Structure probing data (2A3) for a 207-nucleotide construct. The reactions ran in a buffer of 150 mM KOAc, 10 mM MgCl2 and 150 mM bicine (pH 8.5), at 24 C. Source: RMDB library ARCHII, as collected in RNAgym.
RNA sequence: GGGAACGACUCGAGUAGAGUCGAAAACUUUAAAAUAAACGCAGACGAUAAUUUCGCGAUAGCAGCCUAGUUGCUGCUCGUCCCUCUUAGUCCUCCUGCCGACUAAGACUGGACGUCAUUAUGCAGGGAACUACUUUAGGGGUGUCUCGACCUGAAGGUCUGUUCUAACCUUCGGGUUAGAACAGACAAAAGAAACAACAACAACAAC
Reactivity to 2A3 in 0.01 (KOAc 150mM, MgCl2 10mM, bicine 150mM(pH8.5), 24C), signal-to-noise 1, nucleotides 027 to 156: c010u240u030u030a150a110a060a100u110a090a160a000c010g030c140a090g080a090c040g070a110u120a250a140u120u230u140c090g000c000g070a070u120a000g020c000a000g000c030c040u260a180g010u270u120g000c010u000g000c000u000c000g000u000c000c000c000u000c000u010u000a000g000u030c000c000u040c000c010u020g030c040c040g000a010c000u000a010a000g000a000c020u040g000g010a000c000g090u040c000a040u000u160a090u300g050c000a000g000g030g000a030a110c040u060a000c000u090u050u030a010g000g040g010g000u070g000u040c040u010c070g010a030c000c010u020g020a060a000g050